An RNA of 177 nucleotides, treated with 2A3 and DMS and read out base by base. For DMS the reverse transcriptase was MarathonRT.
[RMDB]
RNA sequence: GGGAACGACUCGAGUAGAGUCGAAAACACAUAGGUGCAGUAGAUGAUGAUGAUGAUGAUCAUGAUGACAAUACUGUGAAUAUUAACAGUGCUGGACACUGGCAGGCUAUGCAAAGUCACAGUGACCCUAUCAAGCUGACUUCGGUCAGCUUGAUAGAAAAGAAACAACAACAACAAC
Reactivity to 2A3 in 0.01 (KOAc 150mM, MgCl2 10mM, bicine 150mM(pH8.5), 24C), signal-to-noise 3, nucleotides 027 to 126: c040a000c000a020u110a040g100g000u100g000c010a020g010u070a020g000a150u100g000a020u030g000a000u000g010a010u040g110a040u070g080a010u030c000a010u050g080a100u070g000a050c050a030a100u030a040c010u020g020u060g070a110a030u170a070u090u060a060a060c050a050g050u010g070c050u070g070g030a040c010a000c000u000g020g000c070a070g060g020c050u100a040u200g030c050a140a140a000g010u030c020a010c010a090g000u010g000a040c040c000
Reactivity to DMS in 0.01 (KOAc 150mM, MgCl2 10mM, bicine 150mM(pH8.5), 24C), signal-to-noise 3, nucleotides 027 to 126: c050a120c130a100u000a050g000g030u020g030c010a040g010u000a040g000a090u000g010a120u010g000a050u000g000a060u010g000a150u010g000a070u010c020a020u020g010a100u000g000a110c130a040a100u000a020c010u010g000u000g000a050a050u000a050u000u010a090a180c100a070g020u010g000c090u000g010g000a200c010a010c020u000g000g000c100a070g010g020c050u000a020u010g030c120a050a050a040g020u000c030a050c020a040g010u000g000a090c060c060